[RMDB]
Notes:
An RNA of 177 nucleotides, treated with DMS and 2A3 and read out base by base. DMS adducts were read by reverse transcription with MarathonRT. It was measured as part of the RMDB library TTRDES. 2A3 adducts were read by reverse transcription with SuperScript II with manganese.
RNA sequence: GGGAACGACUCGAGUAGAGUCGAAAAGAUAUGGACGUCGAAGAACAAGUCUCUAUGAAGAGCUUCGGAAACGAAGCUUGGAGAGGACUUGGGAGACGUCCUAAGUCAAAGAGAUCUUCGGAUCUCACAUAAUUGCCAUGUUCGCAUGGCAAUUAUGAAAAGAAACAACAACAACAAC
Reactivity to DMS in 0.01 (KOAc 150mM, MgCl2 10mM, bicine 150mM(pH8.5), 24C), signal-to-noise 4, nucleotides 027 to 126: g010a040u010a300u000g030g000a020c010g030u000c000g000a150a170g010a160a230c020a010a000g000u000c010u000c030u000a100u020g010a300a190g000a000g010c000u000u000c000g000g000a100a100a160c000g000a020a000g000c000u000u000g000g020a280g010a010g000g000a020c000u000u000g000g010g000a170g010a010c010g010u000c000c000u000a020a070g010u000c040a070a110a180g000a010g010a000u000c000u000u010c250g030g000a010u000c010u000c000a130
Reactivity to 2A3 in 0.01 (KOAc 150mM, MgCl2 10mM, bicine 150mM(pH8.5), 24C), signal-to-noise 4, nucleotides 027 to 126: g030a030u080a060u200g010g000a010c010g010u010c050g140a300a090g000a150a040c020a010a010g030u030c100u030c030u300a300u280g040a010a020g010a010g000c010u000u000c000g000g030a060a070a040c010g000a000a000g000c000u000u000g010g000a020g020a020g000g060a050c000u000u000g000g000g000a050g000a000c010g000u000c010c000u010a000a010g000u020c020a030a110a030g000a000g000a000u000c010u070u100c240g130g000a010u010c020u010c000a000